[RMDB]
RNA sequence: GGGAACGACUCGAGUAGAGUCGAAAAAUUCCCGUAGGGUUACAAUGUGUUGCUAGAAUAAACCGUAAGUCAUAGUACAUAUAGAGGCCAAUUCUGUAAACUUUUUUAAAGUCUAUGGAAAACCCUCUAUUCACCAUAGUUUCGACUAUGGUGAAUAAAAAGAAACAACAACAACAAC
Reactivity to 2A3 in 0.01 (KOAc 150mM, MgCl2 10mM, bicine 150mM(pH8.5), 24C), signal-to-noise 3, nucleotides 027 to 126: a000u030u050c000c000c000g010u030a080g010g050g040u040u040a080c080a130a130u100g020u020g020u090u130g030c010u040a000g040a140a110u130a150a090a030c100c020g080u060a100a050g030u030c020a040u060a060g070u080a040c020a010u100a000u040a070g030a000g050g030c030c080a040a180u040u000c000u010g000u000a010a010a010c020u000u060u010u030u070u300a010a000a000g000u000c000u000a000u020g000g020a000a000a010a010c000c010c000u000c010
Reactivity to DMS in 0.01 (KOAc 150mM, MgCl2 10mM, bicine 150mM(pH8.5), 24C), signal-to-noise 7, nucleotides 027 to 126: a230u000u000c000c000c000g040u030a050g010g010g010u000u000a050c100a110a120u010g020u010g010u010u010g020c020u010a080g000a150a100u010a090a080a100c110c070g010u020a100a100g000u010c060a120u010a080g000u000a050c050a060u020a050u020a050g000a040g000g010c120c140a060a180u010u000c000u010g000u000a010a010a010c000u000u000u010u040u030u050a040a010a030g010u000c030u000a000u000g000g000a010a010a090a130c300c000c000u000c030
This 177-nucleotide RNA was probed chemically with 2A3 and DMS. The reactions ran in a buffer of 150 mM KOAc, 10 mM MgCl2 and 150 mM bicine (pH 8.5), at 24 C. 2A3 adducts were read by reverse transcription with SuperScript II with manganese.